[RMDB]
RNA sequence: GGGAACGACUCGAGUAGAGUCGAAAAAAGGUCCUCCGAUUUUAUGGUGUUCCUGGACAAGGUAGAUGGUCCAUUAACUUGGAUCAAGCAAAGACGUGGCUGUUUCAUUUCGCGUCACAGCCUGAUAUACCCACCUAUGAUUCGUCAUAGGUGGGUAAAAAGAAACAACAACAACAAC
Reactivity to 2A3 in 0.01 (KOAc 150mM, MgCl2 10mM, bicine 150mM(pH8.5), 24C), signal-to-noise 3, nucleotides 027 to 126: a000a010g030g000u010c000c000u040c010c010g040a040u060u000u120u200a150u260g030g000u040g050u070u020c010c000u020g060g000a040c040a070a020g040g010u060a050g020a180u030g000g020u000c020c000a020u050u040a050a080c300u000u010g000g000a010u000c000a000a000g040c020a080a030a080g030a040c050g030u030g030g020c030u050g070u070u060u040c050a100u060u190u150c070g000c020g030u010c010a000c010a010g050c030c010u030g020a010u060a020
Reactivity to DMS in 0.01 (KOAc 150mM, MgCl2 10mM, bicine 150mM(pH8.5), 24C), signal-to-noise 5, nucleotides 027 to 126: a090a070g010g000u000c030c050u000c040c020g000a140u000u000u000u000a070u000g010g000u000g010u000u010c020c010u010g000g010a080c080a130a060g020g000u010a090g010a150u010g010g000u000c000c000a010u000u000a100a100c170u000u010g010g000a020u010c010a020a090g000c120a050a080a100g000a060c100g020u000g010g010c070u000g010u010u010u010c060a130u000u010u000c120g010c100g000u000c040a050c070a110g010c000c020u000g000a090u000a130